Chemical mapping of a 177-nucleotide RNA with 2A3 and DMS. The RNA was probed in 150 mM KOAc, 10 mM MgCl2 and 150 mM bicine (pH 8.5) at 24 C. Source: RMDB library M2PK90, as collected in RNAgym.
RNA sequence: GGGAACGACUCGAGUAGAGUCGAAAAACUCUGAGCGUAAUCGCGUCUUGACUAGACUAUUGGUGACGUGAGUAUCUAUCCCAUUGUGCAUAGCGAUGGGAUAAUACGCUGAUCUAUAGUCACGGAACUAGUGACGGACGUUCGCGUCCGUCACUAGAAAAGAAACAACAACAACAAC
Reactivity to 2A3 in 0.01 (KOAc 150mM, MgCl2 10mM, bicine 150mM(pH8.5), 24C), signal-to-noise 2, nucleotides 027 to 126: a000c080u110c060u090g040a070g050c010g030u070a080a120u120c040g000c010g120u050c020u090u130g070a070c030u050a020g010a000c000u010a020u030u180g100g000u010g000a030c020g020u020g070a060g000u020a010u000c060u000a010u000c000c010c000a000u000u010g010u030g010c110a130u300a200g000c020g020a000u010g000g010g000a000u000a000a000u000a000c010g000c000u020g010a020u000c010u000a030u000a000g010u010c000a030c080g020g060a070a030
Reactivity to DMS in 0.01 (KOAc 150mM, MgCl2 10mM, bicine 150mM(pH8.5), 24C), signal-to-noise 2, nucleotides 027 to 126: a100c030u000c050u010g000a050g070c010g000u000a070a140u000c060g010c070g010u000c000u000u000g020a200c150u000a060g000a020c000u000a030u000u000g030g010u010g010a300c280g010u020g000a060g010u000a010u000c260u000a000u000c000c000c000a040u000u020g010u010g020c300a090u000a060g000c010g010a020u000g000g000g000a000u000a000a000u000a010c010g020c010u000g020a150u000c000u010a000u000a000g010u000c010a110c100g010g010a050a240